[RMDB]
RNA sequence: GGGAACGACUCGAGUAGAGUCGAAAAGAUAUGGAUAUCUCCAGGGAGCUCGGUGUCGGAAACGACACUCGAGCGAGGAUCUGGGAUAUCCUAAGUCAAAACCUCGGAAGCUUCGGCUUCCGAGGAACUAAGAACAACAGUUCGCUGUUGUUCUUAGAAAAGAAACAACAACAACAAC
Reactivity to DMS in 0.01 (KOAc 150mM, MgCl2 10mM, bicine 150mM(pH8.5), 24C), signal-to-noise 3, nucleotides 027 to 126: g000a040u000a180u020g000g000a030u000a000u000c000u020c010c020a010g000g020g010a070g020c000u000c000g020g020u000g010u000c010g020g010a040a040a080c000g000a010c000a000c010u020c030g010a020g020c000g000a050g010g010a090u000c000u000g000g010g000a010u000a000u000c000c000u000a010a080g000u000c020a130a110a160a180c000c000u000c000g010g010a030a000g040c000u000u030c270g010g020c000u000u000c000c000g000a000g010g000a010a070
Reactivity to 2A3 in 0.01 (KOAc 150mM, MgCl2 10mM, bicine 150mM(pH8.5), 24C), signal-to-noise 3, nucleotides 027 to 126: g010a010u050a010u110g000g010a010u010a010u030c200u090c100c000a010g030g030g060a120g020c010u000c000g000g000u000g000u010c000g000g010a040a010a020c000g000a000c010a010c020u220c060g010a010g000c000g000a010g010g010a090u000c000u000g000g010g000a000u000a010u000c000c000u000a000a000g000u000c010a030a060a140a280c000c000u000c010g010g000a010a000g000c030u140u230c300g260g000c010u040u010c080c010g010a000g010g000a000a000

Structure probing data (DMS and 2A3) for a 177-nucleotide construct. For 2A3, 7,257 sequencing reads were counted. The data come from the RNA Mapping Database (RMDB), library TTRDES.